[RMDB]
RNA sequence: GGGAACGACUCGAGUAGAGUCGAAAAAUUAGAUCGACCUCGGUGGUCCCCGACGAUGUAUUGCUCGGGAGAAAGGUAUUUACUGACUUGAAUAUUGAUUCCACCUCAAAAACAACUUAGUGAAGUGACAUGGAUAAGGUCUGUUACGCUACUGGCCUGACGAUACUGUUUUCGAACAGUAUCGUCAAAAAGAAACAACAACAACAAC
Reactivity to 2A3 in 0.01 (KOAc 150mM, MgCl2 10mM, bicine 150mM(pH8.5), 24C), signal-to-noise 3, nucleotides 027 to 156: a010u110u110a000g070a060u030c040g030a040c010c050u030c070g010g040u040g000g000u010c000c010c010c010g010a000c010g030a040u120g060u300a150u130u170g060c080u000c010g000g020g010a050g060a020a070a000g030g000u050a050u020u090u090a050c060u020g090a020c010u100u130g020a040a050u080a060u120u030g040a030u100u030c000c020a030c010c020u030c020a030a040a030a050a020c110a020a030c030u110u200a060g040u130g120a080a040g050u020g020a070c050a090u140g070g040a070u080a120a000g000g000u000c020u030g050u030u020a010c050g000c020u000a010c010u020g040g000c010c030
Reactivity to DMS in 0.01 (KOAc 150mM, MgCl2 10mM, bicine 150mM(pH8.5), 24C), signal-to-noise 2, nucleotides 027 to 156: a150u010u000a080g020a110u000c070g010a080c040c000u000c030g020g030u000g010g030u000c020c000c000c010g010a100c090g010a080u010g020u010a080u020u000g000c060u000c030g000g040g000a060g000a020a070a140g010g020u000a040u000u000u000a160c060u030g010a110c040u010u000g000a070a070u000a160u000u000g000a140u000u000c000c030a000c020c000u050c090a020a090a050a110a070c040a060a110c080u000u000a160g030u000g000a060a050g050u000g020a100c000a080u000g020g020a100u020a040a090g000g020u000c040u000g020u000u000a060c050g000c030u000a090c050u000g020g010c030c040